[RMDB]
RNA sequence: GGGAACGACUCGAGUAGAGUCGAAAAUAGGUUGAAUUCGUUCAACCUACAGGCAAGCAAGCAGCGCAACGAGACAAGGCGAUAAUAAGAUAGCGCAUCCUGAUACAUCGGUCUUCGGACCGAUGAACAUAGGUGAGAUGUUCGCAUCUCACCUAUGAAAAGAAACAACAACAACAAC
Reactivity to DMS in 0.01 (KOAc 150mM, MgCl2 10mM, bicine 150mM(pH8.5), 24C), signal-to-noise 5, nucleotides 027 to 126: u000a000g000g000u000u010g000a010a030u000u010c220g010u000u000c000a000a010c000c000u010a010c120a070g010g010c080a050a100g010c120a070a090g000c050a070g020c080g020c040a050a080c090g000a080g010a040c080a040a070g020g020c020g000a050u010a060a070u000a070a070g010a100u010a040g000c040g010c050a090u000c020c020u000g010a120u010a170c000a000u000c000g020g000u000c000u000u000c180g030g000a010c000c010g010a000u000g000a030a130
Reactivity to 2A3 in 0.01 (KOAc 150mM, MgCl2 10mM, bicine 150mM(pH8.5), 24C), signal-to-noise 4, nucleotides 027 to 126: u050a000g000g000u010u000g010a010a010u090u070c200g060u100u000c020a000a000c000c000u010a040c010a010g050g020c040a030a060g000c000a040a030g020c020a040g000c020g010c030a040a050c050g050a010g030a090c040a070a040g070g010c020g030a010u050a120a070u120a090a040g090a120u100a060g050c030g000c030a040u030c000c010u030g020a040u020a200c000a000u000c000g000g010u000c000u030u050c190g080g000a000c010c000g000a000u000g000a020a000
Notes: This 177-nucleotide RNA was probed chemically with DMS and 2A3. Reactivities are given for positions 27 through 126. The reactions ran in a buffer of 150 mM KOAc, 10 mM MgCl2 and 150 mM bicine (pH 8.5), at 24 C. The 2A3 profile rests on 8,673 reads. Source: RMDB library M2PK50, as collected in RNAgym.